[RMDB]
RNA sequence: GGGAACGACUCGAGUAGAGUCGAAAAUGUAAUUAUGUCAUGAACGUGGAAUUCCUAGUAGUUGGUAGUCACUAACGACUAACGAAUGAGUCCCUGUUCUUUGUACACACCGCCCGUCGUUAUCUAACCUAGCUACGUAAUUCGUUACGUAGCUAGGAAAAGAAACAACAACAACAAC
Reactivity to 2A3 in 0.01 (KOAc 150mM, MgCl2 10mM, bicine 150mM(pH8.5), 24C), signal-to-noise 5, nucleotides 027 to 126: u110g010u040a030a090u170u230a090u160g060u040c030a030u040g020a050a010c030g060u080g020g030a030a050u040u030c010c010u020a020g000u020a020g000u010u000g060g000u040a100g140u150c080a030c120u090a090a000c020g020a010c000u030a080a040c020g040a030a030u090g020a030g160u040c000c000c000u030g030u030u000c030u040u050u040g120u120a010c020a000c010a030c040c030g040c020c020c010g070u090c030g010u040u020a120u180c020u010a030a020
Reactivity to DMS in 0.01 (KOAc 150mM, MgCl2 10mM, bicine 150mM(pH8.5), 24C), signal-to-noise 5, nucleotides 027 to 126: u020g010u020a090a100u030u030a090u010g000u000c020a030u000g020a020a020c050g000u000g030g000a050a050u010u000c020c300u000a080g000u000a060g020u010u000g000g000u000a090g010u020c190a120c140u010a040a030c050g010a030c010u000a040a040c160g010a060a060u000g000a100g010u010c020c010c000u010g010u000u000c010u020u000u000g020u020a040c030a040c140a060c090c060g010c000c020c010g010u010c100g000u000u010a060u000c020u000a050a240
An RNA of 177 nucleotides, treated with 2A3 and DMS and read out base by base.
For 2A3 the reverse transcriptase was SuperScript II with manganese.
Values cover nucleotides 27 to 126.